[RMDB]
RNA sequence: GGGAACGACUCGAGUAGAGUCGAAAAGUCUCACGAGUGCACAGACAAAGGUAGUUGACUCCGGUGCUACCAGUACUCGAAGGAAUGCGAAAGAGUUCACGUAUUCCAACCGGAGAAGAACUCAAAACCUGAUUAGUGCGUUCGCGCACUAAUCAGGAAAAGAAACAACAACAACAAC
Reactivity to 2A3 in 0.01 (KOAc 150mM, MgCl2 10mM, bicine 150mM(pH8.5), 24C), signal-to-noise 2, nucleotides 027 to 126: g070u030c010u000c060a010c040g010a000g000u010g000c040a070c110a090g290a090c080a140a100a000g020g010u000a000g000u010u010g050a100c000u000c000c000g000g010u000g000c000u000a000c000c010a000g020u040a070c040u000c000g000a040a040g060g020a000a020u010g080c020g100a240a180a080g170a060g000u160u140c070a030c080g000u020a070u040u050c030c000a000a000c010c010g030g000a000g000a010a010g060a000a030c050u010c000a020a070a000a080